[RMDB]
RNA sequence: GGGAACGACUCGAGUAGAGUCGAAAAAAGUCCAUAUGCCCACCUUCGCUGCUGCGGGUGGAUGCUUAUACAUGCUAUGGAUGCCUACAUUUGAAAUAAUGUAGAUGCCUAAUACUCUCUCUCAGGGAGAGAGUUUAGAUGCCUCCAAAGUAGAUGCAUAAUGGGUAGCAUUCGUGCUACCCAUUAUAAAAGAAACAACAACAACAAC
Reactivity to 2A3 in 0.01 (KOAc 150mM, MgCl2 10mM, bicine 150mM(pH8.5), 24C), signal-to-noise 1, nucleotides 027 to 156: a000a000g020u000c010c010a050u040a090u190g030c000c000c000a000c000c010u180u300c130g010c100u170g020c050u170g000c040g010g060g030u000g000g000a010u060g000c010u070u060a100u010a090c060a060u160g000c000u030a000u090g010g000a010u010g000c000c000u000a000c000a020u010u030u080g110a090a120a080u180a030a000u040g010u010a010g010a130u110g000c000c000u010a000a000u170a190c000u010c000u000c000u000c000u010c240a140g000g300g030a000g000a000g010a000g000u000u000u000a000g000a000u070g000c010c010u030c060c010a010a020a010g060u090a030g010a110u090g050c050
Reactivity to DMS in 0.01 (KOAc 150mM, MgCl2 10mM, bicine 150mM(pH8.5), 24C), signal-to-noise 2, nucleotides 027 to 156: a020a070g000u010c000c000a050u000a080u000g020c030c000c000a080c040c000u000u000c060g050c010u010g040c070u010g010c040g020g000g010u000g020g000a050u000g030c020u000u000a130u020a090c070a120u000g000c030u000a190u010g000g000a010u020g030c130c000u000a000c000a020u000u000u010g010a150a160a140u000a010a050u020g010u000a000g010a160u010g030c040c010u020a030a040u010a060c000u000c000u000c000u000c030u010c070a240g020g040g010a040g010a020g030a000g030u000u000u000a000g020a080u020g020c020c010u010c000c010a030a070a060g020u000a050g000a170u000g010c060
Structure probing data (2A3 and DMS) for a 207-nucleotide construct. The 2A3 profile rests on 524 reads. It was measured as part of the RMDB library OK3TST. 2A3 adducts were read by reverse transcription with SuperScript II with manganese. The reactions ran in a buffer of 150 mM KOAc, 10 mM MgCl2 and 150 mM bicine (pH 8.5), at 24 C.